[RMDB]
RNA sequence: GGGAACGACUCGAGUAGAGUCGAAAAGAUAUGGAGGUGAACUACUCGGUUGGUCUGCGAAGAACUCGGAAACGAGGGAGCAGACCUUCGAGCACCUCCUAAGUCAAAAGGUGAGUUCGCUCACCAACUUGUGUCCUUAGUUCGCUAAGGACACAAGAAAAGAAACAACAACAACAAC
Reactivity to DMS in 0.01 (KOAc 150mM, MgCl2 10mM, bicine 150mM(pH8.5), 24C), signal-to-noise 2, nucleotides 027 to 126: g000a050u000a300u000g000g000a020g000g030u000g000a140a070c070u060a300c010u000c030g000g030u010u000g000g020u000c000u020g030c010g000a100a130g000a140a190c010u000c000g000g000a100a110a150c010g020a000g000g000g010a090g000c000a020g000a030c000c000u000u000c050g160a040g000c030a010c010c000u010c000c000u000a000a050g020u020c040a050a080a110a130g000g010u010g010a020g000u000u000c300g010c000u000c000a000c010c000a020a070
Reactivity to 2A3 in 0.01 (KOAc 150mM, MgCl2 10mM, bicine 150mM(pH8.5), 24C), signal-to-noise 2, nucleotides 027 to 126: g010a010u030a030u190g010g020a010g000g040u000g030a050a040c060u130a050c000u300c020g070g120u050u030g000g000u000c010u010g000c000g090a300a070g000a060a040c000u000c010g000g050a020a110a090c030g000a000g010g000g000a030g000c010a000g020a000c000c000u010u000c010g110a000g030c030a010c000c000u000c000c000u000a040a000g020u000c010a020a000a030a090g000g010u010g020a020g010u010u210c300g000c090u010c020a010c000c000a010a000